[RMDB]
Notes: Chemical mapping of a 177-nucleotide RNA with 2A3 and DMS. The 2A3 profile rests on 838 reads. It was measured as part of the RMDB library OK2TRN. Reactivities are given for positions 27 through 126. For DMS, 1,926 sequencing reads were counted. For DMS the reverse transcriptase was MarathonRT.

RNA sequence: GGGAACGACUCGAGUAGAGUCGAAAACAGGCGGCGCUUUUGUAUAUGAUUGCGGGGGAGAUCCAUGAGCGACUACGCAAGCAGUCUAGGCCAAUGCCUGAGGAUCAAACAGUGGUGGACCCGCUGUUGCUCUGUCAUAUUUCGAUAUGACAGAGCAAAAAGAAACAACAACAACAAC
Reactivity to 2A3 in 0.01 (KOAc 150mM, MgCl2 10mM, bicine 150mM(pH8.5), 24C), signal-to-noise 1, nucleotides 027 to 126: c010a030g000g000c040g000g030c050g000c220u130u140u220u090g090u040a070u000a120u240g060a060u000u050g000c010g050g000g070g080g000a040g010a050u000c040c020a200u180g030a000g100c060g050a040c010u070a010c040g050c010a000a010g000c000a000g030u000c040u150a010g040g020c010c000a050a000u160g010c010c000u000g000a050g010g000a070u120c050a060a050a000c010a000g000u010g060g040u110g120g100a040c010c010c030g040c010u000g040u020
Reactivity to DMS in 0.01 (KOAc 150mM, MgCl2 10mM, bicine 150mM(pH8.5), 24C), signal-to-noise 2, nucleotides 027 to 126: c040a050g000g040c020g000g020c260g030c030u000u000u000u000g020u010a050u000a100u000g010a060u020u000g000c000g000g030g030g010g000a180g010a070u000c030c080a160u000g000a080g030c090g010a110c030u010a060c030g020c050a070a090g010c010a010g000u000c010u000a050g000g020c000c030a080a160u000g010c010c000u000g000a080g000g000a110u010c060a070a070a060c040a020g000u020g000g020u010g000g000a300c050c010c000g000c010u000g010u000